Source information: Structure probing data (2A3) for a 207-nucleotide construct.
RNA sequence: GGGAACGACUCGAGUAGAGUCGAAAAACCUUUGUGCCUAGCAAGCUAUAUCCCUGAGAGGGCAUCCCAUUGGGAUGCCUCCCCACCUCACCAUAUAGUGAUGACCUAGGCACUCUGGUAAAACGAAUUAUACACGCUUCGGCGUGUAUAAUUCGAACCUCCGUAUACCCUUCGGGGUAUACGGAGGAAAAGAAACAACAACAACAAC
Reactivity to 2A3 in 0.01 (KOAc 150mM, MgCl2 10mM, bicine 150mM(pH8.5), 24C), signal-to-noise 2, nucleotides 027 to 156: a010c000c010u000u020u010g000u000g010c000c000u000a010g020c040a220a110g010c010u000a000u000a010u020c000c020c010u020g000a000g000a010g000g020g000c000a010u020c020c010c000a300u210u300g020g010g000a000u000g010c010c000u020c020c010c000c000a080c010c010u020c020a030c060c120a010u020a000u000a030g010u050g130a230u150g030a100c010c010u000a000g000g030c000a000c000u000c000u010g020g020u090a090a060a010a070c010g000a000a000u000u000a000u000a000c020a000c000g040c010u030u150c270g080g000c000g000u010g000u000a000u000a000a010u000u000c000g000a000a000
About this RNA: The reactions ran in a buffer of 150 mM KOAc, 10 mM MgCl2 and 150 mM bicine (pH 8.5), at 24 C.